Chemical mapping of a 177-nucleotide RNA with 2A3. The reactions ran in a buffer of 150 mM KOAc, 10 mM MgCl2 and 150 mM bicine (pH 8.5), at 24 C. Values cover nucleotides 27 to 126. The data come from the RNA Mapping Database (RMDB), library OK1LIB.
RNA sequence: GGGAACGACUCGAGUAGAGUCGAAAACAUCAGUGUUAACCAUAUCCCUGUCCCAGCAUGUGACUGUUCACUCCUGGGAGAGACUUAGCCCACAGUACCCCUGGGUGAGAGGGCAGGGCAGGGGCCACCGACUUCACGCUUUCGAGCGUGAAGUCGGAAAAGAAACAACAACAACAAC
Reactivity to 2A3 in 0.01 (KOAc 150mM, MgCl2 10mM, bicine 150mM(pH8.5), 24C), signal-to-noise 2, nucleotides 027 to 126: c030a030u170c150a080g020u000g040u180u190a050a050c020c010a000u000a080u300c000c000c000u010g020u110c030c000c010a100g050c050a110u200g170u150g270a110c050u050g030u120u030c030a000c050u080c000c000u000g000g010g010a070g030a000g040a000c000u040u210a020g040c000c000c140a090c050a020g010u100a110c020c000c010c080u050g060g000g000u050g020a040g000a030g000g060g080c010a080g000g000g000c000a020g000g000g000g060c000c000a050